[RMDB]
RNA sequence: GGGAACGACUCGAGUAGAGUCGAAAAGAAAGAAAGAGGCAUGUGUGAUGACACAACUUUUUUCCCCAUCAGAUCGACCAUGUUGAUCACAUUCUUUUAAGCCAGUAUGUCUGACAUGCCUGCCUAACUAUUGCUGCCAAUUCGUUGGCAGCAAUAGAAAAGAAACAACAACAACAAC
Reactivity to 2A3 in 0.01 (KOAc 150mM, MgCl2 10mM, bicine 150mM(pH8.5), 24C), signal-to-noise 8, nucleotides 027 to 126: g100a000a050a000g130a000a080a000g110a010g020g020c040a050u020g040u010g050u110g070a100u160g010a010c010a000c000a030a170c050u070u070u010u010u040u070c010c010c010c000a050u100c030a010g010a010u000c010g030a030c050c090a100u300g020u040u040g030a010u010c010a010c010a070u110u110c050u020u110u040u130a050a030g060c050c010a040g050u110a100u110g020u020c030u040g080a010c000a000u010g000c010c000u020g030c010c010u030a070a090
Reactivity to DMS in 0.01 (KOAc 150mM, MgCl2 10mM, bicine 150mM(pH8.5), 24C), signal-to-noise 4, nucleotides 027 to 126: g020a040a070a060g010a040a050a040g010a030g010g010c020a020u020g010u010g000u020g020a080u040g010a020c000a040c070a100a180c030u000u010u010u000u010u010c020c010c000c140a070u060c140a140g000a020u000c020g010a020c030c160a090u030g010u000u010g000a000u010c020a130c170a120u020u010c040u000u000u010u010a060a080g000c060c100a060g000u020a100u000g000u000c010u000g010a030c030a010u000g010c020c010u000g030c040c020u000a050a130